[RMDB]
RNA sequence: GGGAACGACUCGAGUAGAGUCGAAAAGAGUGGUUCGCCACUCAAAAAAGAUAUGGAGCGACAACAGCUAAGUGGAGGCUAUGUGUCGGAAACGACACAGAGCCGAUGAAACUUAGACAUGUCGCUCCUAAGUCAAAAAGCACUGUUCGCAGUGCAACUUCUAUGAUAUGUUCGCAUAUCAUAGAAGAAAAGAAACAACAACAACAAC
Reactivity to DMS in 0.01 (KOAc 150mM, MgCl2 10mM, bicine 150mM(pH8.5), 24C), signal-to-noise 2, nucleotides 027 to 156: g000a010g060u000g010g010u000u000c280g040c020c000a030c020u000c000a000a010a050a080a060a050g010a080u000a300u010g000g000a040g020c000g000a020c000a080a120c100a210g030c010u000a020a030g000u000g040g010a190g000g030c010u000a060u000g040u000g000u000c010g000g020a080a090a270c000g030a030c000a010c000a010g000a010g050c000c000g030a050u000g020a180a120a060c010u000u000a000g020a020c020a270u000g000u010c010g000c020u000c000c000u000a000a070g050u000c030a060a050a040a140a180g000c020a000c010u010g010u000u000c230g050c030a070g060u000g010c030a030a080
Reactivity to 2A3 in 0.01 (KOAc 150mM, MgCl2 10mM, bicine 150mM(pH8.5), 24C), signal-to-noise 4, nucleotides 027 to 156: g020a000g010u020g020g020u070u110c210g070c050c020a030c020u020c020a040a050a020a000a000a000g030a020u040a020u060g000g000a000g010c000g020a000c010a160a010c060a110g090c030u030a000a000g010u010g000g020a000g000g000c000u000a000u010g000u000g000u000c000g010g010a020a040a030c010g000a000c000a000c010a000g010a000g000c000c000g000a000u000g010a000a000a000c000u000u010a000g040a040c030a050u070g000u000c000g000c000u000c000c000u000a010a000g000u000c000a030a040a000a070a000g020c020a000c010u010g040u140u160c260g000c110a000g000u000g000c000a010a010